RNA sequence: GGGAACGACUCGAGUAGAGUCGAAAAGAUAUGGAUACCAGCGACGAUCGUGUCCAUCGGAAACGAUGGCACGGGAGCUGAAUCCUAAGUCAAAAGUUCCGAUAGCACUUCGGUGCUAUCGGAACAAGUAUUACAGCUAGUUCGCUAGCUGUAAUACAAAAGAAACAACAACAACAAC
Reactivity to DMS in 0.01 (KOAc 150mM, MgCl2 10mM, bicine 150mM(pH8.5), 24C), signal-to-noise 6, nucleotides 027 to 126: g000a040u010a300u000g010g000a010u000a090c190c000a020g000c010g010a070c280g000a040u010c010g000u000g010u020c000c000a000u010c000g000g000a120a110a130c010g010a010u000g000g000c010a000c000g000g010g010a030g020c000u000g010a080a040u000c000c000u000a050a150g010u000c010a100a070a140a150g000u000u000c000c000g010a020u000a010g000c000a000c000u000u010c220g030g010u000g010c000u000a000u000c000g010g000a000a000c000a020a050
Reactivity to 2A3 in 0.01 (KOAc 150mM, MgCl2 10mM, bicine 150mM(pH8.5), 24C), signal-to-noise 5, nucleotides 027 to 126: g000a020u090a040u170g020g000a020u080a300c290c000a010g010c000g290a300c030g020a170u060c000g010u000g110u110c020c000a000u010c000g000g020a060a050a030c010g000a000u000g010g000c000a000c000g000g010g000a000g000c000u000g000a010a010u000c000c000u030a150a040g060u020c050a030a050a060a190g000u010u000c000c000g000a010u000a000g000c000a000c020u060u100c300g060g000u010g000c000u000a000u000c010g000g000a000a000c000a000a000